[RMDB]
RNA sequence: GGGAACGACUCGAGUAGAGUCGAAAAUGAAAUCUGUCGGCUCAACCGGCAAAUUGCGUUCUAAACUGGCAGGCUUGAGUGGGUCAGGGGUGUGUGGAACUUCCGGUGGAGCGGUGAAAUGUGUUGACUAAGUAAUAAUCUUCGGAUUAUUACUUAGAAAAGAAACAACAACAACAAC
Reactivity to DMS in 0.01 (KOAc 150mM, MgCl2 10mM, bicine 150mM(pH8.5), 24C), signal-to-noise 5, nucleotides 027 to 126: u000g000a080a070a040u000c050u000g020u000c020g020g010c060u010c220a090a120c020c020g010g000c140a020a030a040u010u000g010c080g010u000u000c050u000a050a130a130c060u000g010g020c040a070g010g010c060u000u000g010a090g020u010g010g010g010u000c060a070g010g000g020g040u010g020u020g020u010g000g000a060a070c080u000u000c030c020g020g010u000g010g010a080g010c040g010g020u000g000a040a090a080u000g010u000g010u010u000g010a240
Reactivity to 2A3 in 0.01 (KOAc 150mM, MgCl2 10mM, bicine 150mM(pH8.5), 24C), signal-to-noise 3, nucleotides 027 to 126: u100g020a000a020a030u050c040u070g080u050c040g100g000c010u030c100a030a030c030c020g050g000c050a000a020a030u080u130g040c030g040u000u020c050u160a080a090a150c030u020g050g000c020a040g100g000c030u110u150g070a070g070u130g050g020g040u050c040a050g030g010g040g010u100g030u010g000u050g020g020a030a020c000u050u000c030c000g010g040u030g020g020a010g030c030g010g020u070g050a070a050a040u160g050u000g010u040u090g040a040